[RMDB]
RNA sequence: GGGAACGACUCGAGUAGAGUCGAAAACCCAGCGGAGGGGUAUGGACUCUUUAAUUGAGGCCUCUCUAACACAUAAAACAUUAAACCUUCGUAGAUUCAUGAGCCGAAUCGUAGGAUGCCCGGAAUUCACUCUUUGUUGUUUCGACAACAAAGAGUGAAAAGAAACAACAACAACAAC
Reactivity to 2A3 in 0.01 (KOAc 150mM, MgCl2 10mM, bicine 150mM(pH8.5), 24C), signal-to-noise 4, nucleotides 027 to 126: c000c000c000a010g060c070g010g000a000g010g020g000g030u100a080u190g080g070a100c040u000c000u040u240u090a210a150u070u150g000a000g000g000c010c000u000c000u010c010u030a140a010c020a000c010a100u260a130a090a060a010c080a050u110u150a150a090a010c030c020u070u060c040g030u060a030g000a100u050u030c040a070u090g070a020g040c030c010g000a030a020u030c030g010u010a040g090g000a020u050g000c020c010c040g070g050a030a040u020u000
Structure probing data (2A3) for a 177-nucleotide construct.
Conditions: 150 mM KOAc, 10 mM MgCl2 and 150 mM bicine (pH 8.5), 24 C.